[RMDB]
RNA sequence: GGGAACGACUCGAGUAGAGUCGAAAAAGGCUUGUCGCGUCGACUGUGAAAUCCCGCGGCUCAACUGCGGGCUUGCAGCCGAUACGAGCAGGCUGUAGGAACGUAAUUGAGAAUGCACAGCGGACGCAAUUUUAAAAAUUUUCGAAUUUUUAAAAUUAAAAGAAACAACAACAACAAC
Reactivity to 2A3 in 0.01 (KOAc 150mM, MgCl2 10mM, bicine 150mM(pH8.5), 24C), signal-to-noise 2, nucleotides 027 to 126: a010g140g000c100u080u060g030u090c020g000c000g010u000c020g050a250c010u000g010u010g050a050a080a110u010c010c010c000g030c000g030g000c010u010c040a010a010c010u000g000c010g010g000g000c000u000u010g010c010a000g000c000c010g030a050u090a210c140g060a020g120c110a060g020g000c000u000g000u000a000g000g020a020a000c000g000u010a040a020u010u000g010a020g020a060a040u100g040c020a010c000a000g010c040g060g000a010c000g010c020
Reactivity to DMS in 0.01 (KOAc 150mM, MgCl2 10mM, bicine 150mM(pH8.5), 24C), signal-to-noise 2, nucleotides 027 to 126: a030g000g000c090u010u010g010u010c080g020c020g010u000c020g010a110c000u000g010u000g000a090a090a140u010c000c000c010g030c050g000g030c010u020c010a000a000c080u000g000c010g000g010g020c010u000u000g000c010a000g000c000c000g000a110u060a070c130g010a120g030c120a190g010g020c000u010g020u000a010g020g000a010a010c010g010u000a020a040u010u000g000a020g000a030a040u000g010c000a000c020a000g000c180g010g000a010c020g020c010